The data come from the RNA Mapping Database (RMDB), library TTRINS. This 177-nucleotide RNA was probed chemically with DMS. Conditions: 150 mM KOAc, 10 mM MgCl2 and 150 mM bicine (pH 8.5), 24 C. The DMS profile rests on 13,093 reads.
RNA sequence: GGGAACGACUCGAGUAGAGUCGAAAAGAUAUGGAAUGGCUAGGGAGCUCCCGAAGGAAGUCUAAUUACAUCGGAAACGAUGUAAUUAGACUUCCUUCGUGAGCGAGGAUCUAGCAUUCCUAAGUCACAAUACAACACUGUUCGCAGUGUUGUAUUGAAAAGAAACAACAACAACAAC
Reactivity to DMS in 0.01 (KOAc 150mM, MgCl2 10mM, bicine 150mM(pH8.5), 24C), signal-to-noise 4, nucleotides 027 to 126: g000a060u000a300u010g000g010a010a010u000g010g020c010u000a010g000g010g000a070g020c000u000c000c070c000g010a020a010g000g000a030a010g010u000c000u000a010a010u000u000a000c000a000u000c010g010g000a180a090a230c000g010a000u000g000u000a000a010u000u000a000g000a000c000u000u000c000c000u000u000c000g000u000g010a010g020c010g010a040g020g010a050u010c000u000a010g010c010a030u000u000c000c000u000a030a130g000u000c040a290